[RMDB]
Structure probing data (DMS and 2A3) for a 170-nucleotide construct. Values cover nucleotides 27 to 129. It was measured as part of the RMDB library 15KLIB. The DMS profile rests on 38,406 reads. DMS (dimethyl sulfate) methylates the pairing face of unpaired adenines and cytosines. For DMS the reverse transcriptase was MarathonRT.
RNA sequence: GGGAACGACUCGAGUAGAGUCGAAAAGAAGUGACGGGGGGGGGUCACUAGGAACACUGGGGUCCAGUGGAUCCGUGGGACUACCCUCUCCACCCUCCCAACACACUCCUUCCCCCCUGCGGGGCUUACGCAAGGGUGUUCGCACCCUUGAAAAGAAACAACAACAACAAC
Reactivity to DMS in 0.01 (KOAc 150mM, MgCl2 10mM, bicine 150mM(pH8.5), 24C), signal-to-noise 7, nucleotides 027 to 129: g020a090a070g040u000g000a120c250g000g000g000g000g000g000g000g000g000u030c030a030c040u010a200g000g000a020a070c010a030c000u030g010g000g000g060u060c040c010a010g000u030g000g010a100u000c000c000g000u060g000g000g000a050c040u080a230c000c040c020u000c000u010c000c000a120c000c020c000u000c010c000c000a130a140c220a030c140a020c020u000c010c040u010u040c010c000c000c000c010c010u040g010c100g000g000g020g030c070u040u010a070c160g000
Reactivity to 2A3 in 0.01 (KOAc 150mM, MgCl2 10mM, bicine 150mM(pH8.5), 24C), signal-to-noise 9, nucleotides 027 to 129: g060a060a010g020u020g040a060c090g000g000g000g000g000g000g000g000g000u010c020a050c090u030a040g000g010a010a000c000a000c000u000g010g020g070g130u140c050c000a010g010u010g020g040a230u010c010c000g020u150g000g000g000a000c000u300a300c010c000c010u020c010u000c000c010a030c000c010c010u020c000c000c000a090a010c120a000c010a020c040u070c020c000u070u100c000c000c000c020c000c010u010g010c120g000g020g000g010c000u070u070a030c080g000